Structure probing data (2A3) for a 207-nucleotide construct.
The 2A3 profile rests on 852 reads.
RNA sequence: GGGAACGACUCGAGUAGAGUCGAAAAGAAAGAGAGUUAGACACGGUUGAUCUCACCCUUCGGGCGGGCUAUAGAGAUCACUGGAAGCACUACCGGACAACCGGAACAUUGCAGCAAUGCAGCCCAAAAAAUCCAAACAUCUUCGGAUGUUUGGAAAGCUUACCUUUGUGUUCGCACAAAGGUAAGCAAAAGAAACAACAACAACAAC
Reactivity to 2A3 in 0.01 (KOAc 150mM, MgCl2 10mM, bicine 150mM(pH8.5), 24C), signal-to-noise 1, nucleotides 027 to 156: g050a000a120a000g110a010g000a020g030u090u140a050g050a040c010a030c140g020g070u110u150g000a010u010c000u000c000a020c000c020c000u070u190c060g060g000g010c000g000g020g000c030u050a010u070a260g010a000g000a000u000c010a000c020u000g000g030a000a010g040c060a000c040u030a040c000c030g010g000a060c070a190a250c030c000g020g010a040a020c020a040u030u160g000c000a000g000c030a040a040u010g000c030a020g010c000c000c000a040a010a070a000a000a050u070c000c010a000a000a000c000a000u010c000u080u010c120g060g000a000u000g000u000u000u010g000g000a060a000a000

Reactivities are rounded to 0.1 and cut off at 0 and 3.